An RNA of 177 nucleotides, treated with 2A3 and DMS and read out base by base. The RNA was probed in 150 mM KOAc, 10 mM MgCl2 and 150 mM bicine (pH 8.5) at 24 C.
RNA sequence: GGGAACGACUCGAGUAGAGUCGAAAAUGUCUUAUUACACCGCAGCAACCGUGUGCUGAGCGCCUCUCAGUAUUGAUUAAACACAGUUGGUGUCGCCUAUGUUAACGUCAAAUAUAAAGUAUUGGUCUCGCUACUGUGUAUUCGUACACAGUAGCGAAAAAGAAACAACAACAACAAC
Reactivity to 2A3 in 0.01 (KOAc 150mM, MgCl2 10mM, bicine 150mM(pH8.5), 24C), signal-to-noise 3, nucleotides 027 to 126: u080g020u000c010u040u060a160u090u090a060c050a030c060c000g000c010a070g000c000a010a060c030c040g020u020g010u030g080c040u020g000a010g000c070g080c020c010u090c000u000c030a000g010u080a090u040u200g140a130u030u220a040a040a000c030a000c000a070g040u070u040g070g100u010g040u070c020g030c010c010u100a110u170g100u040u090a050a010c020g060u010c090a080a060a000u120a050u080a100a140a020g070u030a070u110u110g050g000u000c000
Reactivity to DMS in 0.01 (KOAc 150mM, MgCl2 10mM, bicine 150mM(pH8.5), 24C), signal-to-noise 2, nucleotides 027 to 126: u000g000u040c050u020u020a080u030u010a050c080a050c030c050g030c020a050g000c150a040a050c020c070g030u020g030u000g000c000u000g000a030g000c300g010c110c100u000c040u000c030a030g030u030a130u030u010g020a130u010u030a050a080a050c100a030c070a010g050u000u000g010g000u000g000u000c000g000c080c060u010a050u000g000u010u000a020a080c120g020u000c000a010a050a070u010a050u010a040a070a100g010u000a110u000u000g000g000u000c070